The record gives the reactivity of an RNA of 207 nucleotides to DMS and 2A3. It was measured as part of the RMDB library OK3TST. Conditions: 150 mM KOAc, 10 mM MgCl2 and 150 mM bicine (pH 8.5), 24 C.
[RMDB]
RNA sequence: GGGAACGACUCGAGUAGAGUCGAAAACGUUUUGGAUUUCAUAGCAGCAGCUUUGUGGAGAACAUGGAAGGCUCGCAGGAUGAGGACAAUCUUAGAUUACUGGCCAGUGCAGCCUCUAGGAGUAGCAGGGAUACUGAGACACCCACCGACCAUGCCAGAAACGUUGUAAAUUCGUUUACAACGUUUCAAAAGAAACAACAACAACAAC
Reactivity to DMS in 0.01 (KOAc 150mM, MgCl2 10mM, bicine 150mM(pH8.5), 24C), signal-to-noise 2, nucleotides 027 to 156: c090g010u000u000u000u010g000g000a120u010u000u000c100a160u000a100g040c060a110g010c010a080g030c070u000u010u000g060u110g000g030a140g000a060a040c080a060u000g020g010a080a120g010g040c030u020c070g050c060a100g010g010a070u010g020a140g000g020a080c070a090a080u000c090u000u000a070g000a160u000u000a070c050u000g010g000c020c000a100g000u000g010c060a130g000c030c020u000c050u010a080g010g000a120g000u000a090g010c000a060g000g000g020a140u000a080c070u000g030a140g000a070c020a070c030c010c010a080c060c000g010a090c020c010a050u000g010c020c060a200
Reactivity to 2A3 in 0.01 (KOAc 150mM, MgCl2 10mM, bicine 150mM(pH8.5), 24C), signal-to-noise 3, nucleotides 027 to 156: c040g000u030u000u060u150g070g000a040u000u100u130c020a040u100a090g000c050a000g000c010a010g020c020u110u070u120g070u120g010g040a060g010a090a030c030a040u070g040g040a060a010g020g020c030u020c040g000c000a010g060g020a030u060g020a040g030g020a020c030a030a010u080c060u050u030a050g020a090u050u110a100c040u050g000g030c000c010a070g120u060g090c030a010g000c010c000u010c010u020a060g040g040a050g020u060a010g010c000a010g030g000g000a020u050a100c050u010g000a010g000a040c010a040c040c000c000a000c000c000g030a020c000c000a050u110g020c020c020a020